[RMDB]
RNA sequence: GGGAACGACUCGAGUAGAGUCGAAAAAGUGAGCGGUCCCUCAAACAACCGAGCUUCCCCGUCAAGCCACAGCUAUCUCUGACAUUGCUGGCAAGAUGUUGGCAGUUCAGUUGUAUGACGGAGACCAUCUAAUUAACAGCUUCGGCUGUUAAUUAGAAAAAGAAACAACAACAACAAC
Reactivity to 2A3 in 0.01 (KOAc 150mM, MgCl2 10mM, bicine 150mM(pH8.5), 24C), signal-to-noise 3, nucleotides 027 to 126: a000g180u110g040a040g060c100g010g000u010c010c000c000u000c000a070a100a010c010a010a010c000c010g010a000g020c000u000u030c010c000c010c000g010u010c000a030a010g010c000c020a080c030a030g010c010u040a030u060c130u040c060u190g030a070c060a110u020u090g000c000u000g020g000c010a010a010g020a000u020g030u060u090g000g000c020a000g010u010u000c000a000g010u030u000g020u030a060u020g020a010c150g040g020a210g000a070c000c000a010
Reactivity to DMS in 0.01 (KOAc 150mM, MgCl2 10mM, bicine 150mM(pH8.5), 24C), signal-to-noise 4, nucleotides 027 to 126: a100g020u020g020a100g030c180g000g010u000c020c010c010u000c020a030a110a040c030a020a010c000c020g010a020g000c000u000u010c030c010c300c010g000u000c010a020a300g000c020c030a050c220a090g010c060u000a050u000c060u010c200u010g000a060c150a030u000u000g010c090u000g010g000c020a060a300g000a000u000g000u010u010g020g010c140a020g010u000u000c000a060g010u000u010g020u000a080u000g010a020c130g020g010a110g020a030c010c010a050